[RMDB]
Source information: Structure probing data (DMS) for a 177-nucleotide construct. The reactions ran in a buffer of 150 mM KOAc, 10 mM MgCl2 and 150 mM bicine (pH 8.5), at 24 C. Source: RMDB library TTRINS, as collected in RNAgym. Values cover nucleotides 27 to 126.
RNA sequence: GGGAACGACUCGAGUAGAGUCGAAAAGAUAUGGAAAAUGGCGUGCACACUGUGAAAGACAUGCUCACACUAUCGGAAACGAUAGGAGAGCAACAGCUUUACAGUGUGCACGCCAUUUUCCUAAGUCGAGAUAUAAAACGUUCGCGUUUUAUAUCUCAAAAGAAACAACAACAACAAC
Reactivity to DMS in 0.01 (KOAc 150mM, MgCl2 10mM, bicine 150mM(pH8.5), 24C), signal-to-noise 2, nucleotides 027 to 126: g010a100u010a300u000g010g000a010a000a010a010u000g030g010c000g050u000g000c000a010c000a010c000u050g000u000g000a000a020a050g000a140c080a120u000g000c000u000c000a070c180a300c030u000a010u000c000g000g000a210a170a220c010g020a000u010a010g000g000a110g000a030g020c010a020a040c140a100g000c020u000u000u000a010c010a000g020u000g020u000g000c020a010c000g000c000c010a010u000u000u000u000c000c010u000a000a060g020u000c110